[RMDB]
RNA sequence: GGGAACGACUCGAGUAGAGUCGAAAACUCUUCUGAUUGCUUCUAUUUUCUCAGUGAAAUAAGAAGCUUGAUCAUCAGCUGAGAACAGAGUGGGGAGGCACAUCUGAGGUUUCAGAGAGAGGGAGAACCUAAGAACGAGAUUCGUCUCGUUCUUAGGAAAAGAAACAACAACAACAAC
Reactivity to DMS in 0.01 (KOAc 150mM, MgCl2 10mM, bicine 150mM(pH8.5), 24C), signal-to-noise 6, nucleotides 027 to 126: c020u000c020u000u000c030u000g010a040u000u000g010c000u000u000c010u000a120u000u000u010u000c010u010c250a170g020u000g010a010a010a020u000a090a070g010a010a010g010c000u000u000g010a090u010c150a060u010c040a030g010c120u000g010a040g000a100a130c140a090g010a080g020u010g010g010g000g010a080g010g010c110a060c110a070u000c040u000g000a060g030g010u000u000u000c060a030g000a100g000a090g010a080g010g000g010a120g010a090a150
Reactivity to 2A3 in 0.01 (KOAc 150mM, MgCl2 10mM, bicine 150mM(pH8.5), 24C), signal-to-noise 4, nucleotides 027 to 126: c010u020c000u100u000c030u030g020a030u040u090g010c000u020u000c000u020a090u050u040u040u010c080u020c050a140g050u080g220a010a020a010u100a100a040g020a020a010g000c050u030u080g030a040u020c030a010u000c010a010g020c020u040g030a010g010a080a030c040a020g090a020g070u050g010g020g020g020a020g030g000c030a020c010a110u030c010u030g050a050g130g040u030u170u030c040a000g010a010g000a000g010a020g040g000g000a070g030a020a020